[RMDB]
The record gives the reactivity of an RNA of 177 nucleotides to 2A3. The data come from the RNA Mapping Database (RMDB), library TTRDEL. 2A3 adducts were read by reverse transcription with SuperScript II with manganese.
RNA sequence: GGGAACGACUCGAGUAGAGUCGAAAAGAUAUGGAUCUACUCGGGAGCGUACUCGGAAACGAGACGCGACGAUCGAGGGAUCCUAAGUCAAAACAUCAUCGUACAAGUUCGCUUGUACGAUGAUGAAGCAGCGCGUAAAGUUCGCUUUACGCGCUGCAAAAGAAACAACAACAACAAC
Reactivity to 2A3 in 0.01 (KOAc 150mM, MgCl2 10mM, bicine 150mM(pH8.5), 24C), signal-to-noise 1, nucleotides 027 to 126: g040a010u070a050u130g030g010a050u100c020u290a300c000u260c000g000g020g020a000g060c000g020u300a300c010u000c000g000g000a080a070a000c000g000a000g040a000c010g020c020g090a300c000g020a020u000c020g000a010g010g000g010a000u000c010c000u000a140a000g020u030c020a000a000a000a200c000a000u030c010a000u020c010g020u000a000c000a010a010g010u030u120c210g070c300u000u000g000u000a000c000g010a000u010g010a000u020g000a000a030